[RMDB]
RNA sequence: GGGAACGACUCGAGUAGAGUCGAAAAAAGGUGACUUCGGUCACCUUAAUAAGCCGCUCUUAGCUCAGCCUGGCAGAGCAGCCGACUGUAGAUCGGCUUGUCCCCCGUUCAAAUCGGGGAGAGCGGACCAUGUCAGAAGGAUAUUCGUAUCCUUCAAUCUCUCUAAUCUUUUCGAAGAUUAGAGAGAAAAAGAAACAACAACAACAAC
Reactivity to DMS in 0.01 (KOAc 150mM, MgCl2 10mM, bicine 150mM(pH8.5), 24C), signal-to-noise 2, nucleotides 027 to 156: a030a000g010g020u010g010a030c010u000u000c300g070g010u000c010a010c000c000u020u000a000a080u010a100a090g030c020c010g020c030u000c000u000u010a160g010c050u000c020a200g020c070c190u040g010g000c120a140g010a070g040c030a110g000c000c010g010a000c040u020g040u000a190g010a220u000c020g000g000c020u000u000g000u000c010c000c020c010c000g030u000u000c090a050a300a090u000c060g010g020g020g000a090g000a010g030c000g030g000a070c050c010a140u000g010u000c040a150g010a040a010g010g000a030u000a050u000u000c250g010u000a030u000c000c020u000u000c000a030a160
Reactivity to 2A3 in 0.01 (KOAc 150mM, MgCl2 10mM, bicine 150mM(pH8.5), 24C), signal-to-noise 2, nucleotides 027 to 156: a000a000g040g000u020g000a020c040u060u110c230g010g000u000c010a000c000c000u010u030a000a020u020a040a020g050c010c000g000c000u000c000u010u020a020g010c000u000c020a010g000c010c070u090g060g080c080a000g000a000g000c010a010g000c000c000g010a010c030u170g120u300a050g050a300u010c000g000g000c000u000u040g010u010c000c020c000c000c000g000u010u030c010a000a020a020u020c000g000g000g010g000a000g000a000g000c000g000g000a000c000c010a100u180g130u180c060a030g000a020a000g010g010a000u010a030u040u180c210g040u030a000u060c000c000u000u010c010a010a010
This 207-nucleotide RNA was probed chemically with DMS and 2A3. For DMS the reverse transcriptase was MarathonRT. The DMS profile rests on 3,469 reads. 2A3 adducts were read by reverse transcription with SuperScript II with manganese. It was measured as part of the RMDB library ARCHII.